[RMDB]
RNA sequence: GGGAACGACUCGAGUAGAGUCGAAAAAAGGGCCCAGAGGGGAAUGAGCCUCGUCGUCGACGAAGGGGUGCAUUCCGAAGAGCUGGCCUGGCGUCGUCCGGCUCCCUCGACCGCACCGGAGCGCUAGCCAAAACACGAAGUUCGCUUCGUGUUUUGGAAAAGAAACAACAACAACAAC
Reactivity to DMS in 0.01 (KOAc 150mM, MgCl2 10mM, bicine 150mM(pH8.5), 24C), signal-to-noise 1, nucleotides 027 to 126: a050a100g000g010g030c050c050c050a040g010a090g040g010g000g020a000a030u000g010a270g000c000c010u000c000g000u000c000g030u020c280g000a160c020g010a080a020g030g010g020g020u000g020c000a030u000u000c000c010g000a080a100g000a140g000c030u000g000g000c040c000u000g010g020c010g000u000c100g020u000c000c020g000g000c180u000c030c030c000u000c110g020a070c070c100g000c160a150c000c020g000g000a070g000c000g000c020u010a140g000